Structure probing data (DMS and 2A3) for a 177-nucleotide construct.
Values cover nucleotides 27 to 126.
For 2A3 the reverse transcriptase was SuperScript II with manganese.
For DMS, 5,834 sequencing reads were counted.
The RNA was probed in 150 mM KOAc, 10 mM MgCl2 and 150 mM bicine (pH 8.5) at 24 C.
It was measured as part of the RMDB library OK1LIB.
For DMS the reverse transcriptase was MarathonRT.
[RMDB]
RNA sequence: GGGAACGACUCGAGUAGAGUCGAAAACAGGCUCAGUUUCAUUUGGAAAACAAGAGGGAUUGCAUCAUCUCUGAAAAUGAGACUUUCCUUGACUACAUGUUUUUUGGACAUUAUACGGGCCCCGUGAUCAUAGGGGUCGGUUCGCCGACCCCUAUGAAAAAGAAACAACAACAACAAC
Reactivity to DMS in 0.01 (KOAc 150mM, MgCl2 10mM, bicine 150mM(pH8.5), 24C), signal-to-noise 4, nucleotides 027 to 126: c210a080g000g000c050u000c040a040g040u000u010u000c030a080u030u010u000g000g040a110a080a080a070c180a070a070g010a040g000g000g000a040u020u040g000c190a300u010c090a070u000c000u000c010u000g000a080a050a050a020u030g000a010g000a060c040u000u010u000c020c000u000u020g050a140c110u040a040c220a070u000g010u000u000u010u030u000u050g000g020a030c040a050u010u040a070u010a130c090g000g000g020c020c000c040c040g000u010g000a160
Reactivity to 2A3 in 0.01 (KOAc 150mM, MgCl2 10mM, bicine 150mM(pH8.5), 24C), signal-to-noise 4, nucleotides 027 to 126: c010a020g020g020c050u060c040a030g000u000u040u040c040a070u010u080u100g150g030a120a070a050a040c040a070a050g030a060g140g010g000a030u030u100g060c050a090u080c030a090u010c060u010c060u070g100a100a070a000a010u150g010a010g010a020c000u020u010u000c030c000u050u040g100a090c030u070a050c070a170u110g060u030u030u010u030u050u030g150g000a040c030a030u070u130a070u140a150c070g020g000g010c010c000c010c040g040u070g050a040